[RMDB]
RNA sequence: GGGAACGACUCGAGUAGAGUCGAAAAAACUGUCCAAUUAAGAUUCACAACAAUCAAUCAUUCUAUUGUUUGAUUGUUAGGUAAGGACCCAGGUAAGUUAUUUAUACUCUAGACAUGUGAAUAUUCCAAUUAGAGCCGAAUUCGUUCGGCUCUAAUUAAAAGAAACAACAACAACAAC
Reactivity to DMS in 0.01 (KOAc 150mM, MgCl2 10mM, bicine 150mM(pH8.5), 24C), signal-to-noise 3, nucleotides 027 to 126: a060a070c130u010g020u000c020c010a080a090u070u040a090a060g000a120u030u010c070a090c070a050a030c000a020a020u000c000a000a000u000c010a030u020u060c230u040a060u030u010g000u010u000u000g010a000u010u000g010u000u000a000g000g020u020a080a160g000g000a020c030c050c000a040g000g010u010a060a060g000u020u000a080u020u020u020a050u020a040c020u000c040u000a040g020a050c160a020u020g000u000g000a040a030u010a130u010u000c010c090
Reactivity to 2A3 in 0.01 (KOAc 150mM, MgCl2 10mM, bicine 150mM(pH8.5), 24C), signal-to-noise 2, nucleotides 027 to 126: a000a000c010u010g010u000c000c000a000a060u220u180a170a000g020a060u030u030c000a000c010a080a000c000a000a000u000c000a000a000u010c030a000u180u250c150u300a080u250u200g000u000u000u050g000a000u000u000g000u000u030a020g000g000u070a000a070g000g000a000c000c000c000a000g060g000u130a050a000g000u050u010a040u120u200u050a070u040a060c060u020c000u030a000g030a100c020a050u140g020u000g040a020a000u060a210u100u000c070c030

Structure probing data (DMS and 2A3) for a 177-nucleotide construct. The 2A3 profile rests on 1,052 reads. For DMS the reverse transcriptase was MarathonRT.